Source information:
Chemical mapping of a 207-nucleotide RNA with 2A3. The 2A3 profile rests on 956 reads.
RNA sequence: GGGAACGACUCGAGUAGAGUCGAAAACUAGCCUUAGAGGUAGCAUUAUGGUAAAGAGAUGGUAAUCUUGAAGGGACCAUCUUUGGGUAAAGGGAUUAUUUUGAUGUCAGCUUUAUUCUGAGAGUAGGUAUAGUCUGGUGAUUACUUGUAGGGUGUGCGUGUGGAAUAGCUUCGGCUAUUCCACACGAAAAGAAACAACAACAACAAC
Reactivity to 2A3 in 0.01 (KOAc 150mM, MgCl2 10mM, bicine 150mM(pH8.5), 24C), signal-to-noise 2, nucleotides 027 to 156: c030u020a040g040c000c010u090u110a060g000a050g080g020u070a010g010c030a050u060u030a080u250g060g010u130a100a100a010g040a040g010a010u030g010g110u090a150a080u020c020u020u140g100a070a120g110g040g000a000c000c000a010u010c020u040u040u030g050g000g000u060a040a060a020g000g020g000a020u030u080a030u040u300u160u090g040a050u130g030u090c010a040g000c040u050u050u080a040u280u040c010u020g020a000g000a000g090u130a070g000g040u070a060u010a030g050u000c030u010g020g010u040g050a070u050u060a020c000u050u060g030u060a020g000g010g010u020g010u040g060